[RMDB]
RNA sequence: GGGAACGACUCGAGUAGAGUCGAAAAUGUUACUCCUAGAAGCUUCGGUGUCCUGUCAGCUCCUAUUCUUUCACCGUCCAGUUGUAAUGUAAGGGGGUGGCGCUCUAUACACCCGAAGAGUGUGCACCUUUCGAGUUAGGUUCGCCUAACUCGAAAGAAAAGAAACAACAACAACAAC
Reactivity to 2A3 in 0.01 (KOAc 150mM, MgCl2 10mM, bicine 150mM(pH8.5), 24C), signal-to-noise 2, nucleotides 027 to 126: u190g000u070u070a080c030u070c050c000u020a020g050a190a010g000c070u090u070c070g000g000u000g060u110c000c080u060g070u090c000a050g060c000u050c000c000u110a180u170u000c010u000u090u060c090a060c030c020g060u080c030c020a010g020u040u040g120u240a150a150u140g050u100a030a080g000g000g010g010g000u000g030g000c040g000c010u000c020u020a190u050a030c040a040c000c020c000g030a070a050g010a020g020u030g030u020g030c020a030c000
Reactivity to DMS in 0.01 (KOAc 150mM, MgCl2 10mM, bicine 150mM(pH8.5), 24C), signal-to-noise 2, nucleotides 027 to 126: u030g020u030u000a150c120u000c010c030u030a050g000a100a160g000c030u020u000c070g010g000u010g000u040c070c080u020g000u000c040a080g000c040u020c030c010u000a100u040u010c010u000u000u040c080a050c050c030g000u020c010c050a180g020u010u010g030u000a100a080u030g000u040a070a110g000g030g000g000g020u000g000g020c000g020c030u000c040u000a100u040a030c100a160c040c010c030g000a040a030g000a030g000u010g000u000g000c070a080c060